Structure probing data (DMS and 2A3) for a 177-nucleotide construct. 2A3 adducts were read by reverse transcription with SuperScript II with manganese. The RNA was probed in 150 mM KOAc, 10 mM MgCl2 and 150 mM bicine (pH 8.5) at 24 C. Values cover nucleotides 27 to 126.

[RMDB]
RNA sequence: GGGAACGACUCGAGUAGAGUCGAAAAGAAGAGCAGUCAGAUAAUCUUGUGCAGAAUGAAUGCUCGUAACUCCAUGGCACAAGUAGAUGUAGAUAACUUUAAUCUCGCAUAGCGGAGGAGCCGCAGAGGCGAGUAGCUAUUUCGAUAGCUACUCGCCAAAAGAAACAACAACAACAAC
Reactivity to DMS in 0.01 (KOAc 150mM, MgCl2 10mM, bicine 150mM(pH8.5), 24C), signal-to-noise 2, nucleotides 027 to 126: g000a090a060g000a070g020c040a090g000u000c010a130g000a220u020a030a100u000c000u000u000g030u000g000c040a080g000a060a080u020g000a140a050u000g000c000u010c100g000u000a190a180c070u000c010c020a110u000g000g000c000a020c000a050a000g010u010a100g020a120u010g000u100a010g000a040u000a060a150c110u070u010u000a080a060u020c010u000c040g050c050a090u070a070g000c010g000g000a200g000g000a170g010c000c050g030c030a090g000a060
Reactivity to 2A3 in 0.01 (KOAc 150mM, MgCl2 10mM, bicine 150mM(pH8.5), 24C), signal-to-noise 2, nucleotides 027 to 126: g160a010a080g060a000g000c030a000g070u110c020a000g010a300u100a180a140u070c020u000u020g120u050g000c030a030g040a220a000u020g000a110a000u000g050c000u000c020g040u080a000a110c000u040c060c000a050u080g040g000c000a000c000a010a010g090u070a010g080a110u160g030u050a000g050a070u060a150a000c060u110u080u100a150a050u040c000u000c040g000c190a200u030a050g010c020g000g000a040g000g040a020g060c030c020g000c020a010g000a060